Source information
The record gives the reactivity of an RNA of 177 nucleotides to 2A3 and DMS. The DMS profile rests on 4,426 reads.
RNA sequence: GGGAACGACUCGAGUAGAGUCGAAAACGCGAAGUCGGGGAUGUAGCGGCGCACAGGUGAAUCCAGGUCCACCUUGCCUCGCUCGACCAGCCGCAUCAUCACCGUACCUGUGAAAGUCUUUGUGGUGGUCUUCUGUGAAAUUCGUUUCACAGAAGACAAAAGAAACAACAACAACAAC
Reactivity to 2A3 in 0.01 (KOAc 150mM, MgCl2 10mM, bicine 150mM(pH8.5), 24C), signal-to-noise 3, nucleotides 027 to 126: c030g000c020g010a040a000g050u110c010g000g000g000g030a010u010g020u100a040g010c000g020g000c030g000c010a100c020a050g000g020u010g000a040a030u010c020c000a020g050g000u000c020c010a020c000c000u000u020g000c000c010u110c070g050c050u060c050g050a060c010c010a000g000c000c030g000c000a050u040c010a000u010c000a010c020c030g030u060a030c010c000u040g000u050g100a120a050a040g050u040c000u040u060u060g040u030g060g120u070g040
Reactivity to DMS in 0.01 (KOAc 150mM, MgCl2 10mM, bicine 150mM(pH8.5), 24C), signal-to-noise 4, nucleotides 027 to 126: c050g030c050g010a050a070g010u010c020g010g010g000g000a040u000g010u000a270g030c010g010g000c110g010c050a030c200a020g010g010u010g000a050a040u000c030c070a050g000g010u000c040c020a030c000c020u000u000g010c040c110u000c110g020c070u000c070g000a080c120c120a230g010c020c010g000c030a300u020c020a010u000c010a030c020c030g020u000a040c020c010u000g000u010g000a040a070a090g010u000c020u000u000u000g000u000g000g000u000g000
The data come from the RNA Mapping Database (RMDB), library OK2TST.